[RMDB]
RNA sequence: GGGAACGACUCGAGUAGAGUCGAAAAUCAAAGAGCGUCGCACACACGCAGACUUAGUCUGCUGCAUGCAGAGCCUAAACCGCAGGCUCUGUGUGCGAGAUAUCGUUCAAAAUGCAUGCAGAAAAAAGAUCAGACGUAGGUUCGCCUACGUCUGAUCAAAAGAAACAACAACAACAAC
Reactivity to DMS in 0.01 (KOAc 150mM, MgCl2 10mM, bicine 150mM(pH8.5), 24C), signal-to-noise 1, nucleotides 027 to 126: u030c130a100a140a220g010a040g020c010g010u000c000g010c000a010c010a000c010a070c300g000c010a030g000a030c010u000u010a120g010u010c010u010g000c000u000g000c000a010u000g000c000a010g000a000g000c000c000u000a000a100a220c100c180g030c300a030g000g010c000u000c000u010g010u000g010u000g000c000g000a010g020a080u000a080u000c020g000u000u000c030a030a000a220a060u020g020c000a040u000g020c000a080g010a010a070a030a090a080a040
Reactivity to 2A3 in 0.01 (KOAc 150mM, MgCl2 10mM, bicine 150mM(pH8.5), 24C), signal-to-noise 2, nucleotides 027 to 126: u130c040a070a070a050g040a000g030c050g040u010c000g010c000a000c000a000c000a010c010g010c000a000g000a010c020u180u230a030g000u040c010u010g000c030u000g020c000a000u000g010c010a000g020a000g030c020c010u090a130a080a090c070c050g130c150a010g010g010c010u000c010u000g000u000g010u010g010c000g000a000g000a000u230a070u210c030g000u050u090c060a040a060a040a050u080g030c000a000u030g000c020a010g140a000a080a000a010a010a010